[RMDB]
RNA sequence: GGGAACGACUCGAGUAGAGUCGAAAAGCUAGUCGGAGACGACUAGCAACGAUCAGUUCGCUGAUCGGAACGUGCAUUCGAAUACGCUAGAAGCACGAAUAGGCGACGCAUAGCGUAGCGCAGAGGAAGCUCAUGACAUGAAUAACAAGGCGUCGCGGGCGUAUUUAAAUUUCGAUUUAAAUACGCCAAAAGAAACAACAACAACAAC
Reactivity to 2A3 in 0.01 (KOAc 150mM, MgCl2 10mM, bicine 150mM(pH8.5), 24C), signal-to-noise 5, nucleotides 027 to 156: g000c000u000a010g010u000c010g000g020a030g010a130c000g010a000c000u010a000g000c000a000a010c010g000a010u000c000a000g040u090u080c150g000c110u010g000a000u000c000g020g040a040a020c000g000u000g000c090a300u010u020c010g020a060a050u030a040c030g000c020u020a010g000a020a010g010c000a000c010g020a050a110u210a090g090g000c000g000a000c000g010c010a060u090a040g010c010g040u010a020g040c050g000c110a040g030a030g100g050a110a070g050c020u040c070a130u110g040a090c020a070u130g080a130a070u190a160a030c070a080a040g060g000c000g000u000c000g000c000g020
Reactivity to DMS in 0.01 (KOAc 150mM, MgCl2 10mM, bicine 150mM(pH8.5), 24C), signal-to-noise 3, nucleotides 027 to 156: g010c000u000a010g020u010c000g000g010a300g000a300c010g000a030c000u010a010g000c000a020a030c020g000a010u000c000a010g000u000u010c300g030c010u000g010a020u000c000g050g000a060a080c000g030u000g030c010a260u000u000c040g010a200a120u000a060c020g010c010u010a140g000a040a090g000c010a010c010g030a080a100u020a080g010g010c000g020a060c010g030c010a200u000a100g000c030g040u000a060g010c050g000c060a110g000a000g010g000a110a140g010c020u010c060a100u000g000a100c060a160u010g020a190a110u010a060a090c040a080a100g020g010c000g000u000c000g010c010g010
The record gives the reactivity of an RNA of 207 nucleotides to 2A3 and DMS. The reactions ran in a buffer of 150 mM KOAc, 10 mM MgCl2 and 150 mM bicine (pH 8.5), at 24 C. For 2A3 the reverse transcriptase was SuperScript II with manganese. Source: RMDB library OK3TST, as collected in RNAgym. High 2A3 reactivity points to a flexible backbone, as in loops and unpaired stretches.